[RMDB]
RNA sequence: GGGAACGACUCGAGUAGAGUCGAAAAGAACACUGAAGAUAUGGAUCAACUACCCACCACCCUCUAAGACAGGUUAUCGGAAACGAUAACUCGAGAGGAUGAGGUUGAUCCUAAGUCGCUAAAUGAACUAUUGUCUCUCGUUCGCGAGAGACAAUAGAAAAGAAACAACAACAACAAC
Reactivity to 2A3 in 0.01 (KOAc 150mM, MgCl2 10mM, bicine 150mM(pH8.5), 24C), signal-to-noise 2, nucleotides 027 to 126: g070a100a020c140a050c250u220g130a160a040g000a110u060a050u110g020g010a020u000c000a020a000c000u220a220c110c000c030a010c000c030a020c020c050c000u050c000u040a100a030g080a070c030a020g010g080u000u020a000u000c010g030g000a030a040a000c070g000a030u010a020a000c000u000c000g010a010g000a000g030g040a040u030g010a020g060g000u020u030g010a000u000c000c000u000a050a030g030u010c040g000c190u090a110a110a250u290g100a110a030
Reactivity to DMS in 0.01 (KOAc 150mM, MgCl2 10mM, bicine 150mM(pH8.5), 24C), signal-to-noise 3, nucleotides 027 to 126: g000a090a110c080a100c160u010g000a110a070g020a060u000a300u000g000g000a000u000c000a010a000c000u010a100c010c030c010a300c080c030a000c000c000c000u010c010u000a200a140g010a060c300a040g000g010u000u010a000u000c000g030g000a100a020a130c050g000a000u040a000a050c010u020c030g010a010g000a010g000g000a010u000g000a030g000g000u000u010g010a000u000c000c010u000a010a040g010u020c040g010c090u000a030a140a070u020g000a120a210

Chemical mapping of a 177-nucleotide RNA with 2A3 and DMS.
The RNA was probed in 150 mM KOAc, 10 mM MgCl2 and 150 mM bicine (pH 8.5) at 24 C.
Reactivities are rounded to 0.1 and cut off at 0 and 3.
2A3 adducts were read by reverse transcription with SuperScript II with manganese.